Structure probing data (2A3) for a 207-nucleotide construct. It was measured as part of the RMDB library RFM130. For 2A3 the reverse transcriptase was SuperScript II with manganese.

RNA sequence: GGGAACGACUCGAGUAGAGUCGAAAAAAAGUGUUAAUGGUGAGACUGUUGAAAGUGUCUUACCGUUGUGAAUAUUGAGGCAUAUCGAAUCGGCGAGUCAUCGUUUCGGUCGUCCUUUGUUUGGUUGGCGAUACGAUUGUUACUCUUCUACAUAAAAGAUGACAACAGUCUUCGGACUGUUGUCAUCAAAAGAAACAACAACAACAAC
Reactivity to 2A3 in 0.01 (KOAc 150mM, MgCl2 10mM, bicine 150mM(pH8.5), 24C), signal-to-noise 2, nucleotides 027 to 156: a000a000a000g100u120g020u080u050a080a000u080g000g000u020g010a030g010a040c110u080g110u250u220g140a130a070a060g110u040g010u040c040u050u010a000c010c010g000u020u020g000u000g000a090a050u140a170u170u120g000a000g020g040c040a030u030a010u190c080g020a030a060u020c030g050g000c020g040a000g020u030c030a030u040c030g030u000u010u010c080g050g000u010c000g020u000c010c040u020u090u100g130u160u060u040g060g040u060u050g020g000c000g000a010u000a080c000g000a010u050u040g000u040u020a010c020u000c000u080u000c000u100a060c070a060u270a090a060a000a000